[RMDB]
Structure probing data (2A3 and DMS) for a 170-nucleotide construct. Source: RMDB library 15KLIB, as collected in RNAgym. The RNA was probed in 150 mM KOAc, 10 mM MgCl2 and 150 mM bicine (pH 8.5) at 24 C. Reactivities are given for positions 27 through 129.

RNA sequence: GGGAACGACUCGAGUAGAGUCGAAAAUCGGCGUCGCCCCCACAUAGCAGACCCCGGGUCCCCUUCCGAACGAGGGGGACGGUCCUUGGACCUCAGGGGGCCCAUGGAGCCGUGGGAAUCCCCAGACGAACCCAUGUCUUCGGACAUGGGAAAAGAAACAACAACAACAAC
Reactivity to 2A3 in 0.01 (KOAc 150mM, MgCl2 10mM, bicine 150mM(pH8.5), 24C), signal-to-noise 4, nucleotides 027 to 129: u070c010g030g010c040g040u070c050g050c000c010c000c030c000a060c040a090u220a010g090c070a010g030a160c000c050c000c000g060g020g010u030c000c000c000c000u010u000c010c070g140a130a090c050g010a010g000g010g000g010g000a000c000g000g010u030c010c000u060u210g080g020a050c000c030u050c080a090g000g000g000g020g070c000c010c010a050u060g030g050a060g030c030c020g000u050g020g040g020a020a100u110c010c000c000c000a000g030a070c070g050a040a040
Reactivity to DMS in 0.01 (KOAc 150mM, MgCl2 10mM, bicine 150mM(pH8.5), 24C), signal-to-noise 7, nucleotides 027 to 129: u050c030g050g000c070g020u020c090g030c000c050c010c010c030a150c120a090u000a040g030c080a080g020a120c050c030c040c000g030g070g000u020c000c010c010c010u000u050c020c180g050a090a300c130g050a010g000g000g000g000g000a020c050g000g040u030c020c020u000u060g040g010a080c020c030u000c100a110g020g050g020g040g050c040c070c040a040u030g000g040a170g060c000c030g000u000g000g010g010a100a060u050c010c000c010c010a150g010a060c100g040a150a160